[RMDB]
RNA sequence: GGGAACGACUCGAGUAGAGUCGAAAAUGGAUAUUACUUUUAGUCAGUGACUAAGCUCUUUGUUACAUAAUUAUGAAGCAUGAGCUAUACCAUAUCAAUUAGUGGUCACAUUACAUUCAUCAUGAUUUUACUAAUUUUCUUCAUAAUUAUAUGCAUAAAUAUACCUGGCAUUCGUGCCAGGUAUAUUAAAAGAAACAACAACAACAAC
Reactivity to DMS in 0.01 (KOAc 150mM, MgCl2 10mM, bicine 150mM(pH8.5), 24C), signal-to-noise 1, nucleotides 027 to 156: u010g030g010a150u000a070u000u020a090c110u000u000u000u000a020g010u000c020a200g010u010g010a120c020u000a030a140g020c100u010c090u030u000u010g010u000u010a080c070a010u010a020a060u010u000a020u000g010a000a000g050c300a090u010g010a050g020c080u010a180u020a110c030c010a080u000a070u000c080a000a070u000u020a030g030u010g030g000u010c080a050c070a110u020u000a120c140a190u000u030c070a050u000c200a040u000g000a080u000u010u000u000a100c010u010a010a040u000u000u020u000c000u010u000c000a030u000a000a040u000u000a040u000a040u000g000c020a110u000a110
Reactivity to 2A3 in 0.01 (KOAc 150mM, MgCl2 10mM, bicine 150mM(pH8.5), 24C), signal-to-noise 1, nucleotides 027 to 156: u050g060g040a030u020a110u140u090a150c010u080u070u040u040a060g000u000c080a260g060u060g170a000c050u010a000a000g000c010u130c030u040u140u170g030u080u080a010c010a030u030a030a020u050u000a000u000g040a030a000g010c090a080u010g030a070g000c060u050a090u090a060c010c020a030u040a010u240c050a000a060u040u040a120g000u010g000g030u010c030a000c000a040u120u200a130c020a110u160u240c000a010u030c000a020u040g000a050u080u070u190u160a050c010u020a080a040u170u070u050u000c000u000u020c000a000u000a070a020u040u060a040u010a060u090g000c000a050u000a000